[RMDB]
RNA sequence: GGGAACGACUCGAGUAGAGUCGAAAAUUCUGGACAGUUCGACGACCUAUGGAGCCAUCACUUUCUUAUGAUGUCAAUUUCCGGUCGACAGAUCUCAGAGCGAGAUACAGUGACCAGGAGUUCACUCCACCUAACAGUGUUUCGACACUGUUAGGUGAAAAGAAACAACAACAACAAC
Reactivity to 2A3 in 0.01 (KOAc 150mM, MgCl2 10mM, bicine 150mM(pH8.5), 24C), signal-to-noise 9, nucleotides 027 to 126: u030u000c000u010g000g020a030c020a050g070u100u140c040g050a030c010g030a040c030c010u110a170u220g020g000a010g000c010c000a020u020c010a020c060u100u230u130c030u080u230a080u120g020a030u040g030u040c040a150a060u060u090u000c010c000g000g000u000c000g010a010c000a010g070a030u000c010u000c010a190g030a060g210c080g060a000g020a000u100a110c050a040g060u020g090a040c000c010a020g010g020a010g010u040u050c040a050c090u000c010
Reactivity to DMS in 0.01 (KOAc 150mM, MgCl2 10mM, bicine 150mM(pH8.5), 24C), signal-to-noise 8, nucleotides 027 to 126: u010u010c000u010g000g010a120c060a080g010u010u010c060g020a130c030g010a060c060c060u030a120u020g000g000a040g000c040c010a020u010c030a040c170u020u020u020c130u020u010a170u000g010a020u000g000u010c060a070a050u010u010u010c010c010g010g000u000c000g010a090c120a090g000a020u010c000u000c010a200g020a150g020c240g000a010g010a020u000a060c110a090g010u010g010a060c010c010a050g010g000a080g000u010u010c110a050c050u000c110